[RMDB]
Chemical mapping of a 177-nucleotide RNA with 2A3 and DMS. The RNA was probed in 150 mM KOAc, 10 mM MgCl2 and 150 mM bicine (pH 8.5) at 24 C. The data come from the RNA Mapping Database (RMDB), library OK1LIB. DMS adducts were read by reverse transcription with MarathonRT. 2A3 adducts were read by reverse transcription with SuperScript II with manganese.

RNA sequence: GGGAACGACUCGAGUAGAGUCGAAAAAGCAACUUUGUCCAAUGUGGUUCCAACUGCACCAUGAUCAUCGACGGAGACGUGGUGCGCGGGCGCCCCCAGGACCCGGGGGCCGCGGCAUCCCCCGCUCAAAAGACGUUAUAUUCGUAUAACGUCUUUUAAAAGAAACAACAACAACAAC
Reactivity to 2A3 in 0.01 (KOAc 150mM, MgCl2 10mM, bicine 150mM(pH8.5), 24C), signal-to-noise 9, nucleotides 027 to 126: a000g070c060a050a060c060u130u120u120g050u060c020c020a090a100u160g030u080g050g030u080u060c020c010a080a050c080u110g000c010a000c010c000a020u030g100a270u060c030a060u070c070g170a140c120g180g050a080g010a040c010g010u020g000g000u010g010c010g000c010g010g010g010c040g070c000c000c000c000c030a040g040g110a140c010c010c030g000g000g000g000g000c010c030g000c010g010g000c000a030u010c000c000c000c000c000g030c030u060c050
Reactivity to DMS in 0.01 (KOAc 150mM, MgCl2 10mM, bicine 150mM(pH8.5), 24C), signal-to-noise 9, nucleotides 027 to 126: a090g000c070a080a060c070u010u020u010g010u010c020c040a090a100u020g010u010g000g000u000u000c010c030a110a110c170u030g000c010a010c010c010a020u000g000a150u010c020a080u020c080g010a130c230g020g010a050g010a040c030g020u000g000g010u000g000c000g010c170g000g010g020c070g010c010c010c010c020c040a100g000g000a110c080c090c060g000g010g010g000g010c040c060g010c020g000g010c050a110u010c010c000c010c010c020g000c110u020c140